An RNA of 177 nucleotides, treated with 2A3 and DMS and read out base by base. For 2A3 the reverse transcriptase was SuperScript II with manganese. For DMS, 1,033 sequencing reads were counted. The RNA was probed in 150 mM KOAc, 10 mM MgCl2 and 150 mM bicine (pH 8.5) at 24 C.

RNA sequence: GGGAACGACUCGAGUAGAGUCGAAAACUGCUCCGGUUCGCCGGAGCAGAAAUGGAUCCAAUGGAAUCGAAAAUGGAAAUGGAGAUCCAAUAAGGGAUAACAAAACCAGGAUGUUCGCAUCCUGGAAGGAAAUUUGUAAGUUCGCUUACAAAUUUCCAAAAGAAACAACAACAACAAC
Reactivity to 2A3 in 0.01 (KOAc 150mM, MgCl2 10mM, bicine 150mM(pH8.5), 24C), signal-to-noise 1, nucleotides 027 to 126: c000u010g000c010u000c000c000g010g040u050u010c110g000c070c000g010g000a000g000c000a000g000a010a010a010u030g020g030a010u000c010c010a000a060u040g020g040a070a200u020c040g020a050a010a040a140u120g070g090a140a050a000u060g030g010a140g010a050u030c010c000a010a000u120a070a000g100g000g020a030u030a150a040c050a050a060a010a010c000c000a000g010g000a000u000g000u040u010c130g010c090a000u000c000c000u010g000g000a000a000
Reactivity to DMS in 0.01 (KOAc 150mM, MgCl2 10mM, bicine 150mM(pH8.5), 24C), signal-to-noise 1, nucleotides 027 to 126: c000u000g020c010u000c000c000g000g000u000u010c240g010c000c000g020g000a020g000c000a000g010a010a060a040u010g030g010a040u000c010c010a130a150u000g010g000a090a070u000c010g040a090a160a090a070u000g020g000a080a160a050u000g000g010a300g030a020u000c000c000a040a090u000a100a150g010g000g010a060u010a090a050c070a040a100a120a150c000c000a000g000g030a010u000g000u000u020c210g010c000a000u000c000c000u010g020g000a020a030